[RMDB]
Structure probing data (DMS and 2A3) for a 177-nucleotide construct. Values are in units of 0.01, from 0 to 300, in steps of 10. For DMS, 62,527 sequencing reads were counted. For 2A3 the reverse transcriptase was SuperScript II with manganese. It was measured as part of the RMDB library OK1LIB.

RNA sequence: GGGAACGACUCGAGUAGAGUCGAAAAACUAGUAUGUACAGGGGUGAGUUGACCUGUCAUCUAGACUGCUGACCAUCAACUCACCGGUCAGCUGGAUGAUGUACACAGAGUACGACAUCAGUACUCAGUGUAAGGAUUCGUUCGCGGAUCUUUACACAAAAGAAACAACAACAACAAC
Reactivity to DMS in 0.01 (KOAc 150mM, MgCl2 10mM, bicine 150mM(pH8.5), 24C), signal-to-noise 9, nucleotides 027 to 126: a250c010u000a010g000u040a020u000g010u050a010c000a020g000g000g010g010u010g000a060g010u000u000g000a060c020c020u000g000u000c000a000u000c000u000a020g010a180c060u010g010c020u000g000a020c010c080a030u020c090a040a060c070u010c060a070c150c150g000g000u000c010a010g000c000u010g010g000a070u000g010a080u020g010u000a000c080a070c140a120g000a030g000u000a000c000g010a160c150a080u030c120a120g010u000a010c000u000c010a140
Reactivity to 2A3 in 0.01 (KOAc 150mM, MgCl2 10mM, bicine 150mM(pH8.5), 24C), signal-to-noise 9, nucleotides 027 to 126: a000c010u010a010g060u100a050u060g050u090a010c000a010g030g030g020g060u130g090a120g050u070u080g090a070c010c010u010g010u000c000a000u000c000u010a020g070a120c040u040g000c010u010g010a010c010c010a010u100c040a050a070c060u030c080a060c030c020g000g000u000c000a000g000c010u010g020g000a060u060g000a020u070g070u140a010c070a000c040a040g020a000g020u010a010c030g060a030c070a120u090c040a040g000u010a010c010u000c020a000